The record gives the reactivity of an RNA of 177 nucleotides to DMS and 2A3.
For 2A3, 10,997 sequencing reads were counted.
Conditions: 150 mM KOAc, 10 mM MgCl2 and 150 mM bicine (pH 8.5), 24 C.
DMS adducts were read by reverse transcription with MarathonRT.
2A3 adducts were read by reverse transcription with SuperScript II with manganese.
[RMDB]
RNA sequence: GGGAACGACUCGAGUAGAGUCGAAAAUACGUGACCUUCGGGUCACGUAACCGGCGUUCCCAAGUCAAAAAGAGAGACGCAAUCUCGACAGCGGCCUAUUCGUAUGAGUUGCUUUCGAGCAACUCAAUCUAAUGGAAGAUUUCGAUCUUCCAUUAGAAAAAGAAACAACAACAACAAC
Reactivity to DMS in 0.01 (KOAc 150mM, MgCl2 10mM, bicine 150mM(pH8.5), 24C), signal-to-noise 7, nucleotides 027 to 126: u000a000c000g030u000g010a010c000c000u000u020c200g030g020g000u000c000a000c000g020u000a010a070c100c060g010g010c040g010u000u000c000c010c000a140a140g010u020c110a050a060a070a120a070g000a090g000a030g010a080c090g010c180a080a150u000c020u000c010g020a070c140a090g000c050g000g010c040c030u000a080u000u000c040g000u010a110u000g000a020g010u000u000g000c000u000u010u010c170g000a020g010c010a010a000c000u000c000a030a060
Reactivity to 2A3 in 0.01 (KOAc 150mM, MgCl2 10mM, bicine 150mM(pH8.5), 24C), signal-to-noise 5, nucleotides 027 to 126: u040a000c000g000u000g000a000c000c010u010u060c290g060g000g000u010c010a000c010g000u000a000a000c020c030g090g010c010g010u000u010c000c010c010a010a020g160u120c070a030a040a030a150a060g080a010g000a000g010a040c060g010c110a040a120u020c010u010c030g030a050c020a030g040c010g010g000c000c020u070a110u070u100c030g030u120a140u160g000a010g010u000u010g000c000u040u040u140c200g060a010g000c000a010a000c000u010c010a000a010